[RMDB]
An RNA of 207 nucleotides, treated with DMS and 2A3 and read out base by base. Values cover nucleotides 27 to 156. Source: RMDB library OK3TST, as collected in RNAgym. 2A3 adducts were read by reverse transcription with SuperScript II with manganese. The DMS profile rests on 4,659 reads. The RNA was probed in 150 mM KOAc, 10 mM MgCl2 and 150 mM bicine (pH 8.5) at 24 C. For DMS the reverse transcriptase was MarathonRT.
RNA sequence: GGGAACGACUCGAGUAGAGUCGAAAAAACAUCAUAAUAACCUGAGAUGACACCCUUCCGCUUCAGCGACGUGUAAUCAAUCUGACCAGGUGGAUAAAGAGUUGCGCCCGUGACGGUCUGAUAGGGGGCUACAAUCUGUUCAGUGUCCGAUUGAAUGCUAGUAAGAUGAAUUCGUUCAUCUUACUAGAAAAGAAACAACAACAACAAC
Reactivity to DMS in 0.01 (KOAc 150mM, MgCl2 10mM, bicine 150mM(pH8.5), 24C), signal-to-noise 3, nucleotides 027 to 156: a060a050c050a100u010c030a150u000a120a140u000a080a080c060c030u000g030a100g010a140u000g010a120c060a080c020c030c040u000u000c050c020g020c040u010u000c080a160g010c030g030a060c050g020u020g020u000a100a090u010c050a070a060u000c050u010g000a150c060c030a120g040g030u000g010g010a080u000a060a060a070g000a180g020u000u000g010c020g030c010c010c010g060u000g040a110c070g000g020u010c060u000g000a100u000a080g050g020g050g010g000c010u010a020c030a080a090u000c040u000g030u000u000c000a120g020u000g010u000c010c070g000a160u000u000g000a070a120u010g010
Reactivity to 2A3 in 0.01 (KOAc 150mM, MgCl2 10mM, bicine 150mM(pH8.5), 24C), signal-to-noise 4, nucleotides 027 to 156: a000a000c050a130u150c030a020u070a270a050u110a130a070c040c050u110g070a110g030a130u110g030a050c040a090c060c010c000u070u040c070c040g050c060u120u110c060a030g010c020g060a050c060g080u090g040u120a050a090u050c030a010a020u000c010u020g000a010c020c040a040g010g130u030g000g060a040u120a120a170a030g090a020g010u020u040g010c050g140c010c010c050g020u040g040a040c030g030g110u080c050u070g030a050u170a170g000g000g000g030g000c020u040a010c010a030a100u030c000u040g020u070u100c030a060g050u060g030u240c010c000g010a010u020u000g060a080a040u120g030